[RMDB]
This 207-nucleotide RNA was probed chemically with 2A3. The data come from the RNA Mapping Database (RMDB), library ARCHII. For 2A3 the reverse transcriptase was SuperScript II with manganese.
RNA sequence: GGGAACGACUCGAGUAGAGUCGAAAACGAGAUGUGAGAAGUCCGUCUUGUACCUGGUACGGCAAUGGUAGGCGAGGGUGCUUAACGCUAACCCGUCUCUUGUGCUCCUAUCGCUGAAGGGGAGUUUCAUCCAGCACAGCAAGAGCAACCCGUGAUGCCACUGUUUGAGGUUCGCCUCAAACAGUGGAAAAGAAACAACAACAACAAC
Reactivity to 2A3 in 0.01 (KOAc 150mM, MgCl2 10mM, bicine 150mM(pH8.5), 24C), signal-to-noise 2, nucleotides 027 to 156: c010g000a000g010a030u120g160u250g050a040g000a170a050g200u010c000c000g000u000c040u020u000g030u040a110c000c010u000g040g040u110a070c040g020g040c060a070a130u170g050g000u020a020g000g060c010g010a190g010g000g020u080g020c010u170u130a230a060c110g000c090u050a040a090c010c000c000g050u020c000u020c000u050u150g080u060g030c000u000c000c020u150a210u220c080g000c100u040g020a190a130g000g030g000g000a020g030u020u130u150c010a010u010c000c040a010g100c090a010c040a020g020c050a100a000g000a020g000c000a000a080c050c000c020g000u120g000a080u220g010